[RMDB]
RNA sequence: GGGAACGACUCGAGUAGAGUCGAAAACUGGGUUUGCCAUGAACAGGACGUGCCUAGAGAUAGAUAUUCCAUUGAGGCCUGAGUGCAGGUGGUGCAUGGCUGUCGUCAGAUCGUGUCGAGCGCUGAAAUAAAAAUUAAAAUUCGUUUUAAUUUUUAUAAAAGAAACAACAACAACAAC
Reactivity to DMS in 0.01 (KOAc 150mM, MgCl2 10mM, bicine 150mM(pH8.5), 24C), signal-to-noise 4, nucleotides 027 to 126: c050u000g000g000g010u000u020u020g010c010c010a070u010g010a090a100c150a100g000g000a040c080g030u010g020c010c010u010a060g000a140g010a120u020a070g000a090u010a090u010u010c020c020a110u030u020g000a110g000g010c020c020u010g020a080g020u010g010c020a040g000g020u010g000g000u010g000c050a050u000g010g000c030u000g010u010c060g010u010c040a040g010a060u010c030g000u000g010u010c030g000a110g010c070g000c030u020g000a070a060
Reactivity to 2A3 in 0.01 (KOAc 150mM, MgCl2 10mM, bicine 150mM(pH8.5), 24C), signal-to-noise 2, nucleotides 027 to 126: c030u020g070g000g000u030u080u130g050c010c020a040u080g040a050a050c030a060g020g060a010c020g040u060g010c000c000u070a050g020a000g010a080u080a060g110a020u060a140u160u070c030c040a020u030u140g040a070g010g080c010c050u100g090a060g030u120g040c020a000g020g080u070g030g040u030g040c030a030u070g030g040c030u050g060u080c040g000u020c020a030g000a130u040c020g020u040g030u070c010g020a010g020c070g000c050u050g010a080a130
The data come from the RNA Mapping Database (RMDB), library OK1LIB. This 177-nucleotide RNA was probed chemically with DMS and 2A3. As a SHAPE reagent, 2A3 marks flexible, mostly unpaired nucleotides at the ribose 2'-OH. DMS adducts were read by reverse transcription with MarathonRT.